[RMDB]
RNA sequence: GGGAACGACUCGAGUAGAGUCGAAAAAUUUUGCGGUGUGAGCCUUGAAAUUCUCGCCAUUCAUGGGGUUUACAUCUUCAGGACGGACAAUAGAAUCUAAUUAAAUCGGUGGGAUUUUGGCAAGUUACACUAGCUACGUCUUCGGACGUAGCUAGUGAAAAGAAACAACAACAACAAC
Reactivity to DMS in 0.01 (KOAc 150mM, MgCl2 10mM, bicine 150mM(pH8.5), 24C), signal-to-noise 1, nucleotides 027 to 126: a150u010u000u010u030g010c300g000g040u010g000u000g000a130g020c050c020u000u000g000a040a040a040u010u010c010u000c040g020c000c060a080u000u000c090a080u030g000g010g020g000u010u000u030a080c090a040u010c040u010u000c090a090g030g010a090c090g010g000a080c090a030a100u010a040g010a040a120u040c040u020a100a040u000u010a020a030a050u000c080g010g020u000g000g020g030a110u000u030u000u000g000g010c130a040a040g010u030u010a130